[RMDB]
RNA sequence: GGGAACGACUCGAGUAGAGUCGAAAAGAUAAGGAGUGCGUGAGGAAUCGAAGAGAAUAAAUAGAUUCCAAGCACUCUGUAUCAAAAAGUCACGUGCCGAAAGGCAGAAUAUACUCGGAGUGACAAACGAUAGUAGUACCUUCGGGUACUACUAUCGAAAAGAAACAACAACAACAAC
Reactivity to 2A3 in 0.01 (KOAc 150mM, MgCl2 10mM, bicine 150mM(pH8.5), 24C), signal-to-noise 4, nucleotides 027 to 126: g000a030u040a030a110g020g000a010g000u010g010c030g070u130g130a160g010g010a010a000u000c010g010a110a040g100a060g050a130a140u120a160a060a000u060a030g000a000u000u000c000c000a000a010g000c000a000c000u000c000u000g000u010a010u010c030a000a070a020a010a000g010u010c000a000c010g050u060g030c000c000g020a050a030a030g020g000c020a000g030a010a060u250a010u050a040c040u020c060g070g010a080g020u000g000a010c000a000a040a000
Reactivity to DMS in 0.01 (KOAc 150mM, MgCl2 10mM, bicine 150mM(pH8.5), 24C), signal-to-noise 5, nucleotides 027 to 126: g010a030u000a040a140g000g010a020g050u000g000c010g010u030g010a140g000g010a010a000u000c000g020a140a130g010a130g010a120a090u060a060a070a060u000a140g000a000u000u000c000c000a110a130g020c000a000c000u000c000u030g020u000a010u000c000a050a080a060a070a080g010u000c010a010c010g000u030g000c000c020g000a080a060a110g000g010c000a070g000a080a050u020a100u010a080c110u020c070g000g010a200g000u000g000a010c000a070a080a130

The record gives the reactivity of an RNA of 177 nucleotides to 2A3 and DMS. The reactions ran in a buffer of 150 mM KOAc, 10 mM MgCl2 and 150 mM bicine (pH 8.5), at 24 C. For 2A3, 6,847 sequencing reads were counted. For DMS the reverse transcriptase was MarathonRT.